Notes:
The data come from the RNA Mapping Database (RMDB), library M2RFPK. Chemical mapping of a 207-nucleotide RNA with 2A3 and DMS. The DMS profile rests on 3,844 reads.

RNA sequence: GGGAACGACUCGAGUAGAGUCGAAAACGGCAUGAUACCACCGUUAUCGGGUCAACAGAGUAGUUGCAAAUGACAACAAUGCUCAGGUUUAUGCUCUCGCUGCCUAAUGGCGGUGCGGGAAACCCACAAAAGAUAUUGAUCUUCGGAUCAAUAUCAACUGGUGUAUUAACUUCGGUUAAUACACCAGAAAAGAAACAACAACAACAAC
Reactivity to 2A3 in 0.01 (KOAc 150mM, MgCl2 10mM, bicine 150mM(pH8.5), 24C), signal-to-noise 9, nucleotides 027 to 156: c010g000g000c010a020u110g010a010u050a050c000c010a000c010c010g150u080u060a040u090c050g000g000g010u020c010a000a020c040a020g020a010g020u070a020g020u020u030g020c060a110a290a300u250g080a180c010a020a000c010a040a130u110g000c000u010c020a010g050g050u000u070u050a100u170g030c000u000c000u000c010g000c010u020g000c000c010u260a300a150u120g000g000c020g020g050u030g000c020g020g000g000a040a040a030c040c030c010a080c060a050a130a020a010g000a000u000a000u000u000g000a000u000c010u030u110c260g080g000a000u000c000a000a000u000a000u000c000a010a030
Reactivity to DMS in 0.01 (KOAc 150mM, MgCl2 10mM, bicine 150mM(pH8.5), 24C), signal-to-noise 2, nucleotides 027 to 156: c040g000g030c040a110u000g030a120u000a120c030c060a050c010c000g010u000u010a030u000c080g000g000g000u000c020a090a070c050a110g020a020g020u000a100g010u000u000g020c010a060a140a160u030g010a180c000a030a020c020a050a080u000g010c010u000c020a040g000g000u000u000u000a090u020g020c000u000c020u000c040g010c020u000g000c010c000u000a110a110u000g040g010c010g000g040u000g000c060g010g000g000a040a070a050c010c010c020a080c120a090a110a080a130g000a030u000a000u000u000g000a020u000c000u000u000c300g060g020a020u000c000a010a000u000a010u000c000a040a080

Values are in units of 0.01, from 0 to 300, in steps of 10. The RNA was probed in 150 mM KOAc, 10 mM MgCl2 and 150 mM bicine (pH 8.5) at 24 C. DMS adducts were read by reverse transcription with MarathonRT.